Annotation
Chemical mapping of a 207-nucleotide RNA with DMS and 2A3. 2A3 adducts were read by reverse transcription with SuperScript II with manganese. It was measured as part of the RMDB library OK3TST.
RNA sequence: GGGAACGACUCGAGUAGAGUCGAAAAAGGGCACAUCUGAGCUAGCCUGGGAUGGGUCCGGAAAUGCUUCCUGGAGCAGAGGAAACGGUUGACAGCCAAGUGUUGACAGAGAAGUAGUAUUAGCCAGGCAGAGACAUGGGGAAUGUAUUCCAGGCAAUAUUUAUUAGGGGUUCGCCCCUAAUAAAUAAAAAGAAACAACAACAACAAC
Reactivity to DMS in 0.01 (KOAc 150mM, MgCl2 10mM, bicine 150mM(pH8.5), 24C), signal-to-noise 2, nucleotides 027 to 156: a080g010g000g010c010a070c020a040u000c010u020g000a090g010c020u000a180g010c080c000u030g030g020g000a030u010g000g010g060u010c020c010g000g000a010a150a070u000g040c040u000u000c010c010u000g000g020a170g040c080a100g020a130g000g010a060a080a040c060g000g000u010u000g020a080c060a080g000c000c300a050a130g000u010g010u000u000g020a080c000a070g010a190g000a050a070g020u010a130g020u000a130u000u000a130g000c000c020a090g030g040c020a000g000a220g000a070c030a070u020g010g030g080g000a090a030u010g020u000a080u000u000c010c010a070g010g030c060a080a170
Reactivity to 2A3 in 0.01 (KOAc 150mM, MgCl2 10mM, bicine 150mM(pH8.5), 24C), signal-to-noise 1, nucleotides 027 to 156: a010g010g000g000c030a000c000a060u020c040u010g040a010g020c020u040a030g010c010c000u000g000g000g000a000u020g020g010g020u010c020c000g020g010a120a120a000u070g000c020u030u030c000c020u010g030g040a050g020c020a020g050a030g040g100a150a050a020c070g010g000u040u050g070a020c020a020g060c030c020a120a070g030u000g030u140u100g000a040c020a010g050a010g020a120a040g010u100a010g040u040a090u190u020a020g030c030c010a030g000g040c010a000g010a000g000a040c040a070u070g050g000g000g030a080a090u070g020u100a100u010u040c000c000a000g020g030c000a010a050